[RMDB]
RNA sequence: GGGAACGACUCGAGUAGAGUCGAAAAUCAGCCUGAAAAUGUUCUCCGGUUUGACCGUAACCUGAGGUCAGAUAUCUGAGCCCACAGCACGGCGGCCCAUUAAGCUUAUCGUCUGCUCCUGUGUAGGAUACGGAUAAACAUUCGUGUUUAUCCGUAUAAAAGAAACAACAACAACAAC
Reactivity to DMS in 0.01 (KOAc 150mM, MgCl2 10mM, bicine 150mM(pH8.5), 24C), signal-to-noise 9, nucleotides 027 to 126: u010c090a090g010c090c020u010g010a080a060a100a100u020g010u000u000c010u000c020c060g010g000u000u010u000g000a060c040c040g000u010a080a090c100c050u000g000a130g000g010u000c010a020g010a110u020a070u020c030u000g000a090g010c030c010c020a090c100a050g010c170a080c060g010g000c030g000g010c040c010c040a090u020u010a050a100g000c040u010u010a070u010c060g010u010c020u000g000c030u010c020c010u000g010u010g010u010a060g010g010
Reactivity to 2A3 in 0.01 (KOAc 150mM, MgCl2 10mM, bicine 150mM(pH8.5), 24C), signal-to-noise 9, nucleotides 027 to 126: u060c010a010g040c000c010u060g050a070a060a020a080u150g030u080u030c020u000c010c020g030g050u030u040u100g110a100c030c020g040u090a040a050c010c040u040g050a020g020g010u020c010a010g020a050u160a040u060c040u040g030a030g030c000c010c000a060c010a010g040c030a010c020g040g000c000g020g010c010c000c010a070u090u120a070a010g020c020u050u060a050u120c030g040u000c030u030g020c010u010c000c010u070g010u030g060u130a040g020g060

An RNA of 177 nucleotides, treated with DMS and 2A3 and read out base by base. For DMS the reverse transcriptase was MarathonRT. Values are in units of 0.01, from 0 to 300, in steps of 10. It was measured as part of the RMDB libraries RFM100 and RFMREP.